[RMDB]
RNA sequence: GGGAACGACUCGAGUAGAGUCGAAAAGGGGUCUCAGUGCACUCCCACGCUACCCACCCUACUGAACUACCACUGAAGCCUCCACGGUGGCAGUAGGAGGCGUGGGUUGCACUGAGACGGAGGCACCCAAAACAUUUAAGGUUCGCCUUAAAUGUAAUAGGGUAGUAUCUUUCGAGAUACUACCCUAAAAAGAAACAACAACAACAAC
Reactivity to 2A3 in 0.01 (KOAc 150mM, MgCl2 10mM, bicine 150mM(pH8.5), 24C), signal-to-noise 1, nucleotides 027 to 156: g060g030g050g000u020c020u040c020a000g010u010g010c000a010c130u090c000c030c000a010c000g020c010u100a170c040c100c120a140c020c050c010u010a010c010u050g080a250a140c110u100a060c170c000a010c020u000g000a100a000g050c010c010u010c010c010a020c000g000g020u010g020g000c010a000g000u000a000g000g000a000g000g000c020g010u000g000g010g000u000u030g000c000a000c000u000g000a000g000a000c000g000g010a000g010g000c000a050c010c020c000a070a090a000a030c000a010u000u000u010a000a000g070g020u020u210c300g140c020c000u010u010a000a000a010u000g000u010a040a130